Chemical mapping of a 177-nucleotide RNA with 2A3 and DMS. The data come from the RNA Mapping Database (RMDB), library M2PK90. DMS adducts were read by reverse transcription with MarathonRT.
[RMDB]
RNA sequence: GGGAACGACUCGAGUAGAGUCGAAAAGAAAAUAAAGCGCACCUAUAAGGUGGUGCGCAACAAGCGUGACCUAGGAACACGCAUCCUCGCGUCUCCUAAGACGCGAAAGGUAUUCCAAAUAAAAAAACAAUAGUUGAGAGUUCGCUCUCAACUAUUGAAAAGAAACAACAACAACAAC
Reactivity to 2A3 in 0.01 (KOAc 150mM, MgCl2 10mM, bicine 150mM(pH8.5), 24C), signal-to-noise 3, nucleotides 027 to 126: g000a010a110a010a010u150a000a100a020g000c010g000c000a000c010c030u140a140u070a300a090g190g040u080g010g000u000g020c000g000c000a000a010c000a010a010g000c000g000u000g000a050c010c110u190a100g120g070a110a010c010a000c000g000c010a050u070c000c000u000c000g020c000g000u000c010u030c030c040u100a140a080g000a000c000g000c000g010a040a030a000g010g010u010a060u060u050c010c020a030a100a070u190a070a090a050a010a000a000a010
Reactivity to DMS in 0.01 (KOAc 150mM, MgCl2 10mM, bicine 150mM(pH8.5), 24C), signal-to-noise 2, nucleotides 027 to 126: g010a100a080a090a050u000a070a100a110g010c000g010c000a010c000c000u000a140u020a120a140g030g030u000g000g040u010g000c000g000c000a050a050c170a110a080g020c020g030u010g000a090c110c140u010a160g030g020a110a100c010a010c000g020c000a070u010c030c010u000c050g010c000g010u000c000u010c240c200u010a050a010g020a010c010g000c000g000a000a020a010g000g010u010a110u000u000c010c040a070a060a100u060a020a030a020a050a070a120a150

About this RNA:
The reactions ran in a buffer of 150 mM KOAc, 10 mM MgCl2 and 150 mM bicine (pH 8.5), at 24 C. Reactivities are given for positions 27 through 126. For 2A3, 3,073 sequencing reads were counted.